[RMDB]
This 207-nucleotide RNA was probed chemically with DMS and 2A3. Source: RMDB library OK3TST, as collected in RNAgym. Conditions: 150 mM KOAc, 10 mM MgCl2 and 150 mM bicine (pH 8.5), 24 C. DMS adducts were read by reverse transcription with MarathonRT. In probing experiments dimethyl sulfate is read out at A N1 and C N3, which are open when not base-paired.
RNA sequence: GGGAACGACUCGAGUAGAGUCGAAAACUUAUCUCUUAUACGUAGAAUAAAUUUGAAAGACUAUUUGAUCUUAAAACCAAAGUAAUUUUAGAAUGAGUGACAUAUUACAUAGGAAUUUAGUGUCAAUUUCAUGUGUUUAAAAACAUCAUGGGAAAAAAUGACACUGAAUAUUCGUAUUCAGUGUCAUAAAAGAAACAACAACAACAAC
Reactivity to DMS in 0.01 (KOAc 150mM, MgCl2 10mM, bicine 150mM(pH8.5), 24C), signal-to-noise 1, nucleotides 027 to 156: c030u000u020a090u000c020u020c020u000u000a100u000a070c130g000u000a140g010a170a130u000a160a090a130u000u010u030g000a140a060a080g010a090c010u010a020u000u010u000g000a040u010c050u000u000a100a070a110a120c000c030a010a040a080g000u020a010a080u000u000u000u040a130g000a070a080u000g000a090g040u010g000a040c020a060u000a090u000u010a000c030a110u000a180g010g000a070a110u000u020u000a040g020u010g000u000c040a040a080u000u020u000c020a030u000g010u010g010u030u000u010a040a080a150a050a080c020a030u000c040a030u020g000g000g010a000a030a030a070a180
Reactivity to 2A3 in 0.01 (KOAc 150mM, MgCl2 10mM, bicine 150mM(pH8.5), 24C), signal-to-noise 2, nucleotides 027 to 156: c020u060u060a110u150c020u010c020u070u200a160u100a300c030g050u070a050g070a150a090u190a230a140a160u180u140u120g050a080a050a030g040a030c040u030a120u160u140u150g030a050u020c010u040u040a120a080a000a030c000c000a000a100a020g020u010a040a080u020u050u090u270a110g040a120a100u110g020a050g090u010g040a020c020a020u190a020u020u070a010c010a030u090a060g030g020a040a050u090u070u040a060g000u040g020u020c040a050a090u000u050u120c020a020u000g030u000g010u030u050u100a030a040a000a010a000c020a020u170c040a030u030g030g000g190a010a180a060a000a000